[RMDB]
RNA sequence: GGGAACGACUCGAGUAGAGUCGAAAACAUUGUUCUGAUCAUCUGAAGAUCAGCUAUUAGAAGAGAAAGAUCAGUUAAGUCCUUUGGACCUGAUCAGCUUGAUACAAGAGCUACUGAUUUCAACUUCAAAACGGGUGCUACUUCGGUAGCACCCGAAGACUAGAUACUCCUUCGGGAGUAUCUAGUCAAAAGAAACAACAACAACAAC
Reactivity to 2A3 in 0.01 (KOAc 150mM, MgCl2 10mM, bicine 150mM(pH8.5), 24C), signal-to-noise 3, nucleotides 027 to 156: c080a080u150u230g080u210u070c000u010g010a010u000c010a030u030c110u240g120a150a080g000a010u010c020a000g000c000u160a150u240u120a040g030a040a010g020a020g020a090a080a000g020a010u000c010a000g010u060u150a120a000g010u020c020c000u110u170u300g000g000a010c010c000u040g030a080u080c050a000g000c010u010u000g050a030u090a300c090a130a040g000a000g060c010u010a020c000u050g000a030u000u060u030c040a110a080c010u030u010c030a080a110a030a000c000g010g000g010u000g000c010u000a000c020u020u060c100g080g000u000a000g000c000a000c000c000c000g000a000a000